RNA sequence: GGGAACGACUCGAGUAGAGUCGAAAACAAAUCUUUUGUACAUUCGAGGACUAUCCACAAUUAACCGCCAGCUGAGCAAGCUGAACCAAUGAACCUACCAAAAUUGGAAGUAGCCAGGGAAACAUGCCAAUGCGAUAUUGUUCGCAAUAUCGCAUUGAAAAGAAACAACAACAACAAC
Reactivity to 2A3 in 0.01 (KOAc 150mM, MgCl2 10mM, bicine 150mM(pH8.5), 24C), signal-to-noise 1, nucleotides 027 to 126: c020a020a100a060u110c030u090u080u050u120g070u080a030c000a050u020u120c020g040a030g010g030a040c020u030a060u000c020c020a050c040a130a040u160u100a080a120c020c000g000c030c040a030g000c020u010g030a020g110c050a060a010g010c010u020g010a010a020c010c000a000a020u090g040a040a070c000c020u050a070c030c090a050a100a050a120u090u070g040g000a060a000g020u030a020g000c040c090a010g000g000g000a030a080a000c020a040u090g050c050
Reactivity to DMS in 0.01 (KOAc 150mM, MgCl2 10mM, bicine 150mM(pH8.5), 24C), signal-to-noise 4, nucleotides 027 to 126: c050a080a090a110u020c070u010u000u000u000g010u000a120c090a080u020u000c060g010a110g000g010a080c060u000a080u020c030c020a070c130a040a060u000u020a080a130c100c050g010c090c020a050g020c020u000g010a120g020c120a070a030g010c020u010g000a080a100c070c050a050a050u010g020a100a060c060c030u010a060c070c070a040a050a100a070u000u000g010g000a110a060g010u000a040g020c040c030a030g010g010g010a100a070a060c090a050u010g000c130